Source information: An RNA of 177 nucleotides, treated with DMS and 2A3 and read out base by base. Source: RMDB libraries RFM100 and RFMREP, as collected in RNAgym. Conditions: 150 mM KOAc, 10 mM MgCl2 and 150 mM bicine (pH 8.5), 24 C. Values are in units of 0.01, from 0 to 300, in steps of 10. For DMS the reverse transcriptase was MarathonRT.
[RMDB]
RNA sequence: GGGAACGACUCGAGUAGAGUCGAAAAGAGUGGUAACAUCUCGCAACUUUUACUGCGAGAGGGGUGCCCGCCCCAACCCAAGCCUGUUACGACAACAGGGGCAUCCCCAUCAUUUUACCAUCUGAUCUACUGGUAUAGUGUUCGCACUAUACCAGUAAAAAGAAACAACAACAACAAC
Reactivity to DMS in 0.01 (KOAc 150mM, MgCl2 10mM, bicine 150mM(pH8.5), 24C), signal-to-noise 8, nucleotides 027 to 126: g010a040g030u000g000g000u010a020a010c300a140u010c000u000c000g000c010a030a130c300u010u030u030u030a120c190u010g000c000g000a020g010a050g010g010g000g010u000g000c020c000c030g000c020c010c010c050a100a100c060c030c050a130a070g000c120c020u010g010u010u010a080c230g010a130c190a040a030c020a020g000g000g000g020c000a020u020c010c000c000c150a100u030c160a060u010u000u000u000a030c010c000a060u000c020u000g000a150u020c110
Reactivity to 2A3 in 0.01 (KOAc 150mM, MgCl2 10mM, bicine 150mM(pH8.5), 24C), signal-to-noise 8, nucleotides 027 to 126: g080a020g040u100g000g010u020a040a020c020a110u010c000u000c000g000c000a030a070c060u140u200u260u300a150c120u050g000c000g000a010g000a030g000g000g000g000u010g010c000c000c000g030c010c000c010c010a050a140c030c010c020a050a020g060c000c020u040g020u040u090a120c150g050a070c190a050a010c010a030g000g000g020g000c000a060u100c000c000c010c000a090u120c020a030u070u070u050u020a010c000c000a020u030c020u040g030a050u030c010